[RMDB]
RNA sequence: GGGAACGACUCGAGUAGAGUCGAAAAAGAUGGCAGGUUCACCCCGUACGGUGCGGAAGUUCGCGCUUCCGUGAAACGCGAAAAUCGGACGGUGGCUGUAAGUCGCAUCGCAAAACCGCGGCAAGUGUUAACCUGGACCUCUUCGGAGGUCCAGGAACAACAAAGAUCAGUUCGCUGAUCUUUGUUGAAAAGAAACAACAACAACAAC
Reactivity to DMS in 0.01 (KOAc 150mM, MgCl2 10mM, bicine 150mM(pH8.5), 24C), signal-to-noise 2, nucleotides 027 to 156: a180g050a080u000g020g010c030a080g000g000u000u000c060a060c000c040c000c030g080u010a050c020g010g050u010g000c020g020g010a060a050g010u000u000c230g020c220g070c000u000u010c010c060g040u010g030a060a030a050c040g000c020g000a070a040a120a080u000c030g000g020a070c030g000g010u000g010g000c050u000g010u000a070a110g030u000c010g020c010a100u000c030g010c060a030a050a080a130c030c080g000c010g010g020c040a090a130g010u000g000u000u000a080a150c000c000u000g020g000a020c000c000u000c000u010u010c300g030g000a030g020g000u000c000c000a010g000g000a020a040
Reactivity to 2A3 in 0.01 (KOAc 150mM, MgCl2 10mM, bicine 150mM(pH8.5), 24C), signal-to-noise 3, nucleotides 027 to 156: a000g050a030u090g040g020c010a000g040g030u200u180c020a020c000c000c010c010g020u040a020c060g020g050u060g010c000g000g010a000a000g000u120u200c090g010c030g010c120u030u010c010c000g030u010g030a090a110a020c110g020c010g090a060a020a010a140u090c040g020g010a010c040g010g040u070g040g000c070u020g030u050a070a030g010u030c010g010c070a040u060c030g010c090a050a080a050a050c020c030g020c010g070g000c100a110a090g080u050g040u180u130a050a060c000c000u000g000g000a010c000c010u030c000u020u020c110g070g010a000g000g000u000c000c000a010g000g000a010a000

Conditions: 150 mM KOAc, 10 mM MgCl2 and 150 mM bicine (pH 8.5), 24 C. Chemical mapping of a 207-nucleotide RNA with DMS and 2A3. Reactivities are given for positions 27 through 156. 2A3 adducts were read by reverse transcription with SuperScript II with manganese. Source: RMDB library M2RFPK, as collected in RNAgym.